[RMDB]
RNA sequence: GGGAACGACUCGAGUAGAGUCGAAAAGUGGGACAUAGUAUUGCUGAAAAACUCAAUGCUAAGCUGGGAUUUGAUUGUAAUUCUCCCUUUGUGGAGUAUAAAAUUACAGAGUGGCCAACAGCUACUGGUCCUCUUAUAUUUUCGAAUAUAAGAGGACAAAAGAAACAACAACAACAAC
Reactivity to 2A3 in 0.01 (KOAc 150mM, MgCl2 10mM, bicine 150mM(pH8.5), 24C), signal-to-noise 4, nucleotides 027 to 126: g080u100g020g000g010a030c030a060u090a010g020u040a020u050u050g000c040u060g060a040a030a020a090a070c020u000c030a020a010u030g000c010u030a040a010g050c040u060g030g020g020a080u080u070u210g070a100u010u110g000u010a030a030u080u040c010u000c020c030c030u040u120u170g180u240g020g000a010g010u000a010u030a030a080a010a000u000u010a000c000a020g060a020g070u070g030g000c030c010a070a010c020a090g010c010u030a030c020u040g050
Reactivity to DMS in 0.01 (KOAc 150mM, MgCl2 10mM, bicine 150mM(pH8.5), 24C), signal-to-noise 8, nucleotides 027 to 126: g020u000g000g010g010a110c120a120u000a030g010u000a020u000u000g010c100u000g000a090a100a050a120a100c090u000c020a020a030u000g000c020u000a030a080g010c060u000g000g000g000a140u000u000u010g000a110u000u000g000u000a020a040u000u000c000u000c000c000c010u000u010u010g010u010g020g010a020g010u010a060u010a040a050a030a020u000u000a010c010a040g000a090g010u000g010g020c050c060a070a100c120a090g010c030u000a060c140u000g010
The data come from the RNA Mapping Database (RMDB), library OK2TRN.
Chemical mapping of a 177-nucleotide RNA with 2A3 and DMS.
The reactions ran in a buffer of 150 mM KOAc, 10 mM MgCl2 and 150 mM bicine (pH 8.5), at 24 C.
Reactivities are given for positions 27 through 126.
DMS adducts were read by reverse transcription with MarathonRT.